Chemical mapping of a 207-nucleotide RNA with 2A3 and DMS. 2A3 adducts were read by reverse transcription with SuperScript II with manganese. For 2A3, 1,353 sequencing reads were counted. It was measured as part of the RMDB library RNAMAK. Conditions: 150 mM KOAc, 10 mM MgCl2 and 150 mM bicine (pH 8.5), 24 C.

[RMDB]
RNA sequence: GGGAACGACUCGAGUAGAGUCGAAAACUAGACACGCUUCGGCGUGUCUAGAAAAAGAUAUGGAUCCACGCCAAACAGCUAUGAAGUGCUUCGGAAACGAAGCAUGGAGCUGUGGUGGAUCCUAAGUCAAAAAGUUUGGGACUUCGGUCCCAAACAAUCACUGACUUAGAUUCGUCUAAGUCAGUGAAAAAGAAACAACAACAACAAC
Reactivity to 2A3 in 0.01 (KOAc 150mM, MgCl2 10mM, bicine 150mM(pH8.5), 24C), signal-to-noise 2, nucleotides 027 to 156: c000u000a000g000a000c020a020c010g020c000u000u090c280g150g000c000g010u040g000u000c000u000a000g000a010a000a000a000a000g010a010u060a030u050g010g000a000u000c010c000a010c030g090c060c060a270a300a300c040a110g010c000u080a200u300g010a030a010g000u010g000c010u000u000c000g000g010a000a000a000c000g010a000a000g000c000a000u000g000g010a000g000c030u030g010u020g140g030u000g000g010a000u000c000c000u000a000a000g000u000c010a040a040a110a000a070g000u000u010u000g020g000g000a020c000u040u080c280g110g000u000c030c000c050a000a000a000c000a000a030
Reactivity to DMS in 0.01 (KOAc 150mM, MgCl2 10mM, bicine 150mM(pH8.5), 24C), signal-to-noise 1, nucleotides 027 to 156: c000u000a020g000a020c010a060c000g040c010u010u000c300g100g000c010g070u000g000u010c000u010a000g000a020a050a060a250a220g000a030u000a070u010g050g000a010u000c000c010a000c000g050c150c150a170a180a120c020a040g000c000u000a180u020g000a170a300g000u000g000c000u000u000c060g020g000a050a040a140c000g030a030a020g040c020a000u000g030g000a000g050c000u010g080u000g020g030u000g000g000a010u000c000c010u000a000a050g000u000c030a080a090a130a170a100g010u000u000u010g000g000g020a070c010u000u000c240g020g000u000c000c010c020a000a000a000c000a100a100